[RMDB]
RNA sequence: GGGAACGACUCGAGUAGAGUCGAAAAACCUUAUUUUGAGAAGCUGAGGGAUUUGGCCCAUAGAAGCUUCAGCAACCAACUUUAAAUAGCACGGUGCUAAUACCAACGAGCAACUCGAAUGAUAAGUAAAACGUUGACAAGUUCGCUUGUCAACGAAUCACUUUCUGAAGUUCGCUUCAGAAAGUGAAAAAGAAACAACAACAACAAC
Reactivity to DMS in 0.01 (KOAc 150mM, MgCl2 10mM, bicine 150mM(pH8.5), 24C), signal-to-noise 1, nucleotides 027 to 156: a130c090c010u050u050a040u010u000u010u000g000a110g000a070a300g010c170u030g000a230g000g000g000a190u010u010u000g000g000c040c010c000a200u000a160g020a080a010g000c000u000u010c000a030g000c020a000a080c060c000a070a090c000u000u000u000a110a070a120u000a040g000c030a050c120g030g000u000g000c010u000a050a100u000a050c010c000a060a100c080g000a120g060c020a060a240c010u010c030g050a080a090u000g000a080u000a080a050g000u000a070a050a160a180c020g010u000u010g000a020c000a050a010g010u000u010c300g000c000u000u000g000u000c010a010a010c020g020a000a080
Reactivity to 2A3 in 0.01 (KOAc 150mM, MgCl2 10mM, bicine 150mM(pH8.5), 24C), signal-to-noise 2, nucleotides 027 to 156: a010c040c000u090u080a240u030u150u100u090g090a070g000a070a000g010c000u030g020a040g000g000g040a090u020u030u080g030g000c010c000c000a040u130a120g150a060a050g010c000u030u020c000a030g000c000a010a060c020c000a010a080c000u120u120u300a110a190a160u090a110g070c090a040c170g000g000u010g020c020u010a010a050u040a130c010c020a000a080c080g020a020g050c050a020a090c060u020c100g100a030a050u100g090a100u020a160a040g050u050a050a150a040a010c010g010u000u000g000a010c000a020a000g000u060u130c180g120c140u000u000g010u010c000a000a000c000g000a010a000